[RMDB]
RNA sequence: GGGAACGACUCGAGUAGAGUCGAAAAGGGUACAUAUGUCUGCUCACAGGUUCAUCCUUAGGCAGGUGUAUGCGUAUGUUUGGAGGAGGUAUAUGAAGCUGCUCCUUAGUGUGUGCAAAAGUCUGCCACCAAUUGCAAUUUUCGAAUUGCAAUUGGUAAAAGAAACAACAACAACAAC
Reactivity to DMS in 0.01 (KOAc 150mM, MgCl2 10mM, bicine 150mM(pH8.5), 24C), signal-to-noise 8, nucleotides 027 to 126: g010g010g020u000a090c070a060u000a040u000g000u000c040u000g010c020u010c050a090c260a050g000g010u000u010c150a130u010c010c010u000u010a180g010g010c010a010g000g000u000g010u000a110u000g010c030g010u000a030u000g010u000u000u010g010g000a030g000g000a030g030g010u010a080u010a130u010g010a120a170g010c020u000g000c010u000c010c010u000u000a030g010u000g020u000g000u000g000c030a020a040a100a300g000u000c020u000g000c120c060
Reactivity to 2A3 in 0.01 (KOAc 150mM, MgCl2 10mM, bicine 150mM(pH8.5), 24C), signal-to-noise 5, nucleotides 027 to 126: g030g000g000u100a040c040a060u220a070u150g060u030c040u030g000c030u040c050a100c030a050g040g000u150u160c060a080u170c050c000u050u090a030g000g000c010a000g040g000u050g010u010a020u010g000c000g000u060a050u070g140u020u060u060g040g010a040g030g040a030g010g180u180a190u040a080u270g130a120a040g040c020u100g030c000u010c000c000u010u010a100g010u070g010u010g000u000g040c010a000a000a050a060g030u010c020u030g010c010c010
Conditions: 150 mM KOAc, 10 mM MgCl2 and 150 mM bicine (pH 8.5), 24 C. Structure probing data (DMS and 2A3) for a 177-nucleotide construct. DMS adducts were read by reverse transcription with MarathonRT. The DMS profile rests on 15,915 reads. Values cover nucleotides 27 to 126. Reactivities are rounded to 0.1 and cut off at 0 and 3. For 2A3, 8,748 sequencing reads were counted.